[RMDB]
RNA sequence: GGGAACGACUCGAGUAGAGUCGAAAAUAAAACAUGCAUUCUAUUCACUGUGCCAUCUGUCAAUUUGUUAGAUGAUCAGAGGGGAAAAGAAGAGCUAGAGCAAUGGUUACGGAAUGGUAGCAAUACCCAUUGUGGUUAACUUCGGUUAACCACAAUGAAAAGAAACAACAACAACAAC
Reactivity to DMS in 0.01 (KOAc 150mM, MgCl2 10mM, bicine 150mM(pH8.5), 24C), signal-to-noise 7, nucleotides 027 to 126: u030a050a050a090a120c120a060u030g000c040a140u000u010c010u000a110u000u000c040a070c020u000g000u000g000c250c010a030u010c030u000g010u010c040a090a140u010u010u010g020u010u010a030g000a040u010g000a080u010c030a030g010a050g000g010g000g000a030a040a080a050g000a030a030g010a090g030c030u000a090g010a090g000c050a040a030u010g000g000u000u000a070c100g000g000a080a040u020g010g010u000a030g000c130a040a070u000a060c030c010
Reactivity to 2A3 in 0.01 (KOAc 150mM, MgCl2 10mM, bicine 150mM(pH8.5), 24C), signal-to-noise 8, nucleotides 027 to 126: u140a010a090a010a020c080a040u120g020c010a100u040u040c010u050a050u010u040c030a030c080u090g010u030g100c020c000a040u010c030u030g060u080c050a080a180u030u050u040g080u080u100a060g010a140u080g020a040u090c020a020g040a060g070g060g020g040a020a050a020a040g090a020a020g040a010g020c020u080a030g010a010g050c020a030a070u070g050g010u060u080a010c010g020g090a080a040u060g000g020u020a020g010c020a040a050u030a080c000c000
Conditions: 150 mM KOAc, 10 mM MgCl2 and 150 mM bicine (pH 8.5), 24 C. Structure probing data (DMS and 2A3) for a 177-nucleotide construct. 2A3 adducts were read by reverse transcription with SuperScript II with manganese. For DMS the reverse transcriptase was MarathonRT. It was measured as part of the RMDB libraries RFM100 and RFMREP. Values cover nucleotides 27 to 126.